[RMDB]
RNA sequence: GGGAACGACUCGAGUAGAGUCGAAAAAGAUCAUCAUGAAUCGUGUGUGUAUAGAUCCCCUGAUCCUUUAACAAUCCUGGUAAGGAAUAUACAUGAUCAUGGGUUUUUAUGGGAACCAGCUUUGGUGUCGUAUGGCAUUAUUCGUAAUGCCAUACGAAAAAGAAACAACAACAACAAC
Reactivity to 2A3 in 0.01 (KOAc 150mM, MgCl2 10mM, bicine 150mM(pH8.5), 24C), signal-to-noise 2, nucleotides 027 to 126: a000g050a040u040c010a070u000c010a010u090g100a120a090u100c080g010u030g010u010g020u000g000u050a040u030a230g180a150u110c020c010c040c020u020g030a080u070c000c000u030u230u030a060a050c040a080a020u070c030c060u100g000g080u080a020a020g040g000a050a000u060a000u000a030c050a020u020g010a000u020c000a000u020g000g000g040u000u050u030u030u080a110u060g060g050g040a030a060c030c010a020g030c080u180u070u080g060g040u070g040
Reactivity to DMS in 0.01 (KOAc 150mM, MgCl2 10mM, bicine 150mM(pH8.5), 24C), signal-to-noise 5, nucleotides 027 to 126: a040g000a030u000c030a110u010c020a030u000g010a050a050u000c040g030u010g030u000g010u000g010u010a090u010a100g000a100u010c040c050c040c080u000g000a100u010c010c040u000u000u000a100a080c160a110a070u000c030c060u000g000g020u000a090a040g000g000a040a080u000a050u000a030c040a030u010g000a020u000c000a010u000g000g000g010u000u000u000u000u010a080u010g010g000g010a090a060c030c020a050g010c130u000u010u010g010g020u000g010

Description:
Structure probing data (2A3 and DMS) for a 177-nucleotide construct. Conditions: 150 mM KOAc, 10 mM MgCl2 and 150 mM bicine (pH 8.5), 24 C. The data come from the RNA Mapping Database (RMDB), library OK2TRN. Values cover nucleotides 27 to 126. DMS adducts were read by reverse transcription with MarathonRT. For 2A3 the reverse transcriptase was SuperScript II with manganese.